[RMDB]
RNA sequence: GGGAACGACUCGAGUAGAGUCGAAAAAUGUACUUCAUGUGGCAUCAGCAAUACAAUCCAUGCAACACUAGUAAUGCAUGUGGGAUCUCGUCAGUAGGUUUUCACUACAAUUACUCAGCAAAUACUUUAACAACACCUUCCUGUCUUAUCAAGGUCACUAUCCUGGCAGCUUCGGCUGCCAGGAUAGAAAAGAAACAACAACAACAAC
Reactivity to 2A3 in 0.01 (KOAc 150mM, MgCl2 10mM, bicine 150mM(pH8.5), 24C), signal-to-noise 1, nucleotides 027 to 156: a000u090g030u020a070c060u030u120c080a060u140g050u030g110g000c030a020u020c000a090g040c000a020a010u080a080c010a010a020u000c000c080a030u000g010c010a070a050c020a030c120u040a040g050u050a110a030u040g010c020a020u010g000u030g040g050g020a000u030c050u000c020g140u060c000a040g040u050a030g080g020u000u000u080u290c030a010c020u130a000c010a040a010u080u030a000c020u040c030a000g090c060a060a120a000u040a190c050u020u120u150a050a050c030a050a030c000a000c100c030u080u130c010c030u020g120u120c030u050u060a190u080c090a010a000g010g000u030c000a010